[RMDB]
RNA sequence: GGGAACGACUCGAGUAGAGUCGAAAAGCAAAGAAAUUUUAUCCCAAUAAGGCGAAGUAAGCAAGUCGACCCAACGCGAGGGCGCUAGCGUGCUUACGAGCCCUAGCAGAAUAAUCGCGAGAAAAAACAGUUACUUCAGAUUCGUCUGAAGUAACUGAAAAGAAACAACAACAACAAC
Reactivity to DMS in 0.01 (KOAc 150mM, MgCl2 10mM, bicine 150mM(pH8.5), 24C), signal-to-noise 4, nucleotides 027 to 126: g020c130a080a040a090g000a060a080a120u000u010u000u010a100u000c000c000c000a090a100u000a070a080g000g000c010g000a100a120g000u000a000a010g010c030a130a050g060u000c010g020a160c010c010c000a060a120c050g000c040g000a040g000g000g010c030g020c110u000a030g010c180g030u000g010c010u000u000a020c040g000a300g000c000c010c010u000a020g000c110a110g000a110a080u010a060a080u000c040g020c030g020a190g020a010a010a050a120a060a110
Reactivity to 2A3 in 0.01 (KOAc 150mM, MgCl2 10mM, bicine 150mM(pH8.5), 24C), signal-to-noise 5, nucleotides 027 to 126: g030c040a070a090a070g200a050a180a050u120u160u070u090a110u080c000c010c020a000a080u150a050a010g020g000c020g020a030a010g040u030a010a010g010c060a020a010g040u080c030g130a300c000c000c000a090a030c040g010c020g050a050g010g000g010c020g000c010u010a020g070c060g160u110g020c010u020u010a020c040g000a000g000c010c000c000u050a040g010c030a030g100a260a090u210a160a050u050c000g000c010g020a050g130a030a100a010a010a000a000
An RNA of 177 nucleotides, treated with DMS and 2A3 and read out base by base. High 2A3 reactivity points to a flexible backbone, as in loops and unpaired stretches. For DMS, 2,823 sequencing reads were counted. DMS adducts were read by reverse transcription with MarathonRT. It was measured as part of the RMDB library M2PK90.